Structure probing data (2A3 and DMS) for a 177-nucleotide construct.
2A3 adducts were read by reverse transcription with SuperScript II with manganese.
High 2A3 reactivity points to a flexible backbone, as in loops and unpaired stretches.

[RMDB]
RNA sequence: GGGAACGACUCGAGUAGAGUCGAAAAGUUGCAAUCUCGUAUAGCUUCGCGGUGGUCUCUGCAACAGUCUUACCCUCAAGCUUGAACUCGGCGGUGUAGUUCCUCUUGGUCUGGUCAUACUUCACCCCCUGCAUGAGUAAUUCGUUACUCAUGCAGGAAAAGAAACAACAACAACAAC
Reactivity to 2A3 in 0.01 (KOAc 150mM, MgCl2 10mM, bicine 150mM(pH8.5), 24C), signal-to-noise 3, nucleotides 027 to 126: g060u040u040g030c020a060a090u010c040u030c090g070u150a100u080a180g060c040u070u060c050g010c040g030g060u110g050g040u060c040u000c020u090g010c020a040a010c000a030g030u000c020u030u120a140c000c030c000u010c070a060a040g010c010u060u070g020a030a020c010u010c090g050g000c050g000g040u040g040u060a060g000u040u010c010c000u030c010u030u060g050g010u000c050u040g030g020u030c000a030u020a140c020u070u050c040a120c020c010c010
Reactivity to DMS in 0.01 (KOAc 150mM, MgCl2 10mM, bicine 150mM(pH8.5), 24C), signal-to-noise 4, nucleotides 027 to 126: g010u010u000g020c030a090a120u000c040u010c080g030u010a080u000a110g010c060u000u010c070g020c090g010g020u010g010g000u000c040u010c070u000g010c040a030a100c190a060g010u010c040u010u010a190c040c010c000u000c080a070a090g000c070u000u000g010a060a070c080u000c050g000g010c050g000g000u010g010u010a080g000u000u000c030c020u010c060u000u010g010g000u000c030u000g010g000u000c050a060u010a080c050u010u000c120a150c030c020c060

The DMS profile rests on 4,820 reads. Source: RMDB library OK2TST, as collected in RNAgym.